Structure probing data (DMS and 2A3) for a 207-nucleotide construct. The DMS profile rests on 2,071 reads. Conditions: 150 mM KOAc, 10 mM MgCl2 and 150 mM bicine (pH 8.5), 24 C. High 2A3 reactivity points to a flexible backbone, as in loops and unpaired stretches. Reactivities are given for positions 27 through 156.
RNA sequence: GGGAACGACUCGAGUAGAGUCGAAAAGAUGACUUUGCAUCACUAGUUUCCAAGAGGUUGGUCAUGAUGAACUGUGCAACAGAAAACUAUUCAUCAGAGGUAUCUCGGCUGAAACAGACUCUAAGCUCAAGGAAUGUUAUUCAUGGACUAGCUGGAGACACUAGACCCUUUUCGAAGGGUCUAGUGUAAAAGAAACAACAACAACAAC
Reactivity to DMS in 0.01 (KOAc 150mM, MgCl2 10mM, bicine 150mM(pH8.5), 24C), signal-to-noise 2, nucleotides 027 to 156: g000a120u010g050a090c040u000u010u000g010c020a110u000c010a120c060u020a140g000u010u000u020c010c020a140a180g000a070g000g040u000u000g020g050u000c070a070u010g010a090u000g000a020a040c030u000g020u000g050c040a100a300c120a250g010a070a040a100a120c040u010a110u000u000c020a010u010c020a130g020a210g010g020u000a050u030c010u000c020g040g010c070u000g000a090a110a090c020a070g000a080c020u000c040u010a090a050g050c030u000c010a040a100g070g000a140a040u000g030u000u010a210u000u000c070a070u000g000g010a070c050u000a100g030c030u010g010g000a150g000
Reactivity to 2A3 in 0.01 (KOAc 150mM, MgCl2 10mM, bicine 150mM(pH8.5), 24C), signal-to-noise 2, nucleotides 027 to 156: g090a070u070g020a010c040u100u130u120g030c050a090u030c000a010c070u080a030g050u000u070u030c020c010a000a010g030a010g090g020u150u130g060g080u060c060a110u020g010a000u000g020a040a000c040u040g010u120g160c080a210a090c020a170g050a070a100a020a020c020u030a020u040u040c000a020u000c000a000g020a050g120g050u120a030u030c010u020c000g090g000c040u040g000a010a010a000c040a030g040a050c020u000c020u090a090a060g000c000u000c090a000a030g040g000a120a010u140g040u110u130a160u190u110c050a050u070g050g050a060c010u020a020g000c010u020g000g020a070g030